[RMDB]
This 177-nucleotide RNA was probed chemically with DMS and 2A3. The reactions ran in a buffer of 150 mM KOAc, 10 mM MgCl2 and 150 mM bicine (pH 8.5), at 24 C. The 2A3 profile rests on 750 reads. DMS adducts were read by reverse transcription with MarathonRT. Reactivities are given for positions 27 through 126. The DMS profile rests on 1,318 reads.

RNA sequence: GGGAACGACUCGAGUAGAGUCGAAAAAUCAUCAAAGGGUGGCUCUGUGAUGCAGAGUAUGCUCUGUGAAUUGAUACGCCUGAAGCAUUAUUUUCAGUAAGAUUUUCUGUCUUUUUUUCCAGGAACACGUCAGAUUCGAAUUCGUUCGAAUCUGACGAAAAGAAACAACAACAACAAC
Reactivity to DMS in 0.01 (KOAc 150mM, MgCl2 10mM, bicine 150mM(pH8.5), 24C), signal-to-noise 2, nucleotides 027 to 126: a030u000c000a040u010c030a100a080a050g000g010g030u020g010g000c030u000c000u000g010u010g050a110u020g000c020a000g000a030g030u000a070u000g010c000u000c000u010g000u000g010a040a080u010u000g010a040u000a080c200g010c040c020u010g010a050a070g020c170a090u000u000a060u010u010u000u010c050a100g000u000a060a080g010a050u000u000u000u000c080u000g000u000c010u040u010u000u000u010u010u010c030c030a130g000g010a070a040c200a120
Reactivity to 2A3 in 0.01 (KOAc 150mM, MgCl2 10mM, bicine 150mM(pH8.5), 24C), signal-to-noise 1, nucleotides 027 to 126: a050u000c000a000u010c020a000a020a110g010g000g010u050g040g060c000u000c000u000g030u010g150a190u300g070c000a000g000a030g020u110a300u040g000c000u000c000u020g010u010g050a040a100u120u060g010a010u020a090c130g060c000c020u050g060a060a000g000c030a040u020u190a050u010u300u040u010c030a010g020u060a080a000g030a050u140u060u050u060c050u070g070u090c040u040u110u060u010u030u010u040c030c000a040g060g020a040a010c050a000